[RMDB]
RNA sequence: GGGAACGACUCGAGUAGAGUCGAAAACGGUUCGGGCAGUCUUGAGAUCCGGAGACCCGAAGCCACUCCCUGGGUCCCAGCCGGCGACCAGCCCAGGGCGGUCCCGCCGCCGCGCGCCUCACGCGCACUGUAGGAAAGAGUUCGCUCUUUCCUACAGAAAAGAAACAACAACAACAAC
Reactivity to 2A3 in 0.01 (KOAc 150mM, MgCl2 10mM, bicine 150mM(pH8.5), 24C), signal-to-noise 3, nucleotides 027 to 126: c040g020g020u040u030c020g010g020g030c060a080g070u060c020u090u170g090a150g030a240u070c070c050g040g010a030g040a050c000c000c020g020a020a020g170c010c010a040c040u010c000c010c030u020g030g000g010u050c000c010c030a020g040c050c050g040g040c030g030a060c020c030a010g010c000c010c000a020g020g000g000c010g030g010u030c020c010c000g030c020c010g030c010c030g040c020g000c000g020c020c040u110c030a100c050g020c000g000c000a020
Reactivity to DMS in 0.01 (KOAc 150mM, MgCl2 10mM, bicine 150mM(pH8.5), 24C), signal-to-noise 5, nucleotides 027 to 126: c160g010g010u000u000c030g010g010g030c090a130g010u010c030u010u010g010a170g010a110u010c040c070g010g000a050g020a120c020c010c010g010a040a070g010c040c020a150c100u010c010c010c010u000g000g010g000u000c030c050c030a120g000c080c040g000g020c050g000a080c050c040a110g010c020c010c000a090g010g010g020c070g010g020u000c020c020c010g000c060c050g000c060c060g020c040g010c030g010c070c080u010c130a100c060g010c020g010c050a180